[RMDB]
RNA sequence: GGGAACGACUCGAGUAGAGUCGAAAAAGGUUCGCUGUGGUGCAACUCUUAUUAGUAACUAAUCCAAAGCAAGUAUAGGAGAACAGGUUUUUAACUAUUUUUAGGCAGAUAAAAAAUAGUAUUUAACAAAAUCGAUUGUCGUUCGCGACAAUCGAAAGAGGUAUAUGUCGUUCGCGACAUAUACCUCAAAAGAAACAACAACAACAAC
Reactivity to 2A3 in 0.01 (KOAc 150mM, MgCl2 10mM, bicine 150mM(pH8.5), 24C), signal-to-noise 1, nucleotides 027 to 156: a000g070g000u020u020c050g010c060u010g000u010g070g030u010g020c030a040a080c010u030c010u090u140a230u080u040a120g040u040a140a000c080u030a080a100u100c100c020a070a060a050g020c030a040a050g040u090a090u090a140g030g020a010g010a040a000c040a120g000g030u080u000u010u000u020a060a040c000u030a020u010u060u000u000u000a010g030g000c010a010g050a170u150a030a070a000a000a030a000u020a010g010u020a170u110u190u120a100a000c000a000a140a030a080u010c000g010a020u000u000g000u000c020g000u020u070c110g000c000g150a010c000a000a000u000c000g000a000a030a010
Conditions: 150 mM KOAc, 10 mM MgCl2 and 150 mM bicine (pH 8.5), 24 C. This 207-nucleotide RNA was probed chemically with 2A3. For 2A3, 875 sequencing reads were counted. For 2A3 the reverse transcriptase was SuperScript II with manganese. Values cover nucleotides 27 to 156.